RNA sequence: GGGAACGACUCGAGUAGAGUCGAAAAAGGUGCACAUACAGAAUUCUUUUGAAGCACAGGAUAGAGAGCAAGAGGAGUUGCUACGCUCCACAGGUAGAAGUGCUAGAAUGGGACAUGGACAGAUGAGAGAUCUGCUUGAUCUCUUGGCCGCCACUGCGCCACUCAGUAGUUUCGACUACUGAGUGGCAAAAGAAACAACAACAACAAC
Reactivity to DMS in 0.01 (KOAc 150mM, MgCl2 10mM, bicine 150mM(pH8.5), 24C), signal-to-noise 1, nucleotides 027 to 156: a080g050g010u000g010c000a100c020a150u010a300c110a140g000a100a120u000u000c080u010u000u000u020g020a090a130g000c050a110c020a150g000g020a120u010a060g000a100g000a000g040c000a040a130g010a100g010g020a110g000u000u010g030c070u000a030c120g000c010u000c030c020a060c050a030g020g000u130a090g010a090a070g020u010g010c020u000a000g000a070a030u020g010g010g010a070c080a070u000g010g000a070c000a060g010a150u000g010a060g000a000g020a040u000c020u010g010c300u000u000g000a030u000c000u010c000u000u000g010g000c010c010g070c030c030a050c130u000g000c150
Reactivity to 2A3 in 0.01 (KOAc 150mM, MgCl2 10mM, bicine 150mM(pH8.5), 24C), signal-to-noise 3, nucleotides 027 to 156: a000g080g020u100g000c090a060c010a050u180a080c070a100g160a160a180u150u140c060u040u160u120u090g100a050a020g010c040a030c010a040g010g020a020u090a060g070a000g010a000g030c040a070a000g000a040g100g060a020g010u010u050g090c050u060a040c050g010c000u010c010c010a060c040a020g020g010u000a010g050a150a000g010u020g050c010u020a000g080a060a050u090g020g020g000a000c010a020u060g030g010a020c000a060g070a060u150g030a030g000a020g000a060u010c000u100g180c130u180u240g010a020u000c000u030c000u000u010g010g000c020c010g000c000c030a060c050u110g010c000